[RMDB]
The record gives the reactivity of an RNA of 207 nucleotides to 2A3. The RNA was probed in 150 mM KOAc, 10 mM MgCl2 and 150 mM bicine (pH 8.5) at 24 C. Values cover nucleotides 27 to 156. The 2A3 profile rests on 709 reads.
RNA sequence: GGGAACGACUCGAGUAGAGUCGAAAAUGGUGCAUUGCUGCCCUAUAUUAGCGGCCAUACCUGCAAACUCCCAAGAUUUAGAGCUUGCACGACCGCCAUAUAAAACACGAUGCCUUACUUUGAUAAAGUUUUCAGGUGAGGGACUACCAUCAAACCAGUCACCAAAUCAUUUCGAUGAUUUGGUGACAAAAGAAACAACAACAACAAC
Reactivity to 2A3 in 0.01 (KOAc 150mM, MgCl2 10mM, bicine 150mM(pH8.5), 24C), signal-to-noise 2, nucleotides 027 to 156: u090g000g000u080g040c070a090u040u100g030c060u060g010c020c020c020u040a040u040a050u140u160a010g000c000g000g000c010c000a090u100a130c040c020u010g010c010a000a000a130c020u020c040c050c030a040a040g200a160u150u120u150a010g000a000g000c000u020u020g000c020a030c030g080a040c010c010g020c010c050a020u030a010u010a050a130a030a010c080a000c070g020a010u050g100c020c000u060u030a030c010u140u100u010g020a020u210a100a200a160g120u160u000u080u050c000a020g000g050u030g010a020g000g020g010a010c050u110a060c000c000a040u060c030a060a010a110c020c010a010
It was measured as part of the RMDB library OK3TST. 2A3 adducts were read by reverse transcription with SuperScript II with manganese.